About this RNA: This 207-nucleotide RNA was probed chemically with 2A3 and DMS. Reactivities are given for positions 27 through 156. The RNA was probed in 150 mM KOAc, 10 mM MgCl2 and 150 mM bicine (pH 8.5) at 24 C.
RNA sequence: GGGAACGACUCGAGUAGAGUCGAAAAACAUGCUGGCCAACCCAACCCCACGAUCCUCCAUCGGCAUGAUCAUGAUGUGUUGUCAAAUAUCAGGCCAGUAAAUCACCAUGCUCGUGCUGGUAAAGGCAACUUAUGCCCAAGUUCGCUUGGGCAUAAAGUUCCUUUAGAAGUUCGCUUCUAAAGGAACAAAAGAAACAACAACAACAAC
Reactivity to 2A3 in 0.01 (KOAc 150mM, MgCl2 10mM, bicine 150mM(pH8.5), 24C), signal-to-noise 4, nucleotides 027 to 156: a000c040a020u060g010c000u010g010g020c000c000a050a050c080c010c020a070a070c010c010c030c020a040c090g070a100u060c010c030u050c060c020a070u050c020g000g000c010a010u010g010a000u010c000a010u020g060a070u080g040u010g050u130u080g070u120c070a050a110a050u210a060u110c050a030g010g000c010c000a010g000u020a010a060a020u040c000a000c010c000a010u010g000c000u010c010g020u020g010c010u010g010g000u050a120a100a020g070g010c040a050a010c040u020u020a000u000g000c000c000c000a000a000g000u030u050c070g020c120u000u010g050g000g000c000a000u000a000a000a000
Reactivity to DMS in 0.01 (KOAc 150mM, MgCl2 10mM, bicine 150mM(pH8.5), 24C), signal-to-noise 2, nucleotides 027 to 156: a070c050a070u010g020c000u000g030g000c010c040a150a150c050c020c030a100a120c060c020c010c020a090c210g000a120u010c020c010u000c030c030a060u010c010g010g000c010a030u000g010a030u000c030a060u000g000a050u000g020u000g010u000u000g020u000c080a100a110a150u010a100u000c080a090g040g000c000c020a040g020u010a020a050a090u000c030a070c000c010a030u000g000c090u000c030g040u000g000c010u010g030g040u000a030a050a040g010g000c080a060a080c080u000u000a010u000g000c020c000c010a020a050g000u000u010c300g040c010u000u000g000g000g030c010a000u000a000a020a080
For 2A3, 3,803 sequencing reads were counted. The data come from the RNA Mapping Database (RMDB), library M2RFOK.